[RMDB]
RNA sequence: GGGAACGACUCGAGUAGAGUCGAAAAGAUAUGGAGAUUCGCAACAGCUUGCGUAUCGGAAACGAUACCAAGACAUGCGAUCUCCUAAGUCAAAACUAAGUAAUGCUGUUCGCAGCAUUACUUAGAAUCUCGUACGUAUCUUCGGAUACGUACGAGAAAAAGAAACAACAACAACAAC
Reactivity to 2A3 in 0.01 (KOAc 150mM, MgCl2 10mM, bicine 150mM(pH8.5), 24C), signal-to-noise 2, nucleotides 027 to 126: g020a000u060a030u080g030g010a000g020a060u300u290c040g000c010a010a100c060a300g140c000u040u060g070c180g060u010a000u000c000g000g000a030a040a000c020g000a000u000a000c010c000a000a000g130a180c020a090u050g000c030g030a000u000c000u000c000c000u010a030a000g020u000c000a010a000a150a150c000u000a010a000g010u010a010a000u010g000c000u020g070u140u140c300g030c140a000g000c000a020u000u000a000c010u010u010a000g000a010a030
Reactivity to DMS in 0.01 (KOAc 150mM, MgCl2 10mM, bicine 150mM(pH8.5), 24C), signal-to-noise 1, nucleotides 027 to 126: g000a030u010a300u010g000g000a000g020a010u040u010c010g050c000a000a110c150a060g010c010u010u000g000c300g000u000a000u000c000g000g000a020a020a130c010g050a000u000a000c000c000a040a010g030a130c090a150u000g030c000g040a020u000c000u000c000c000u000a010a070g000u000c010a060a060a090a280c000u000a010a020g000u000a000a020u000g010c010u000g000u000u000c290g000c020a030g000c000a000u000u000a000c000u000u000a000g010a050a070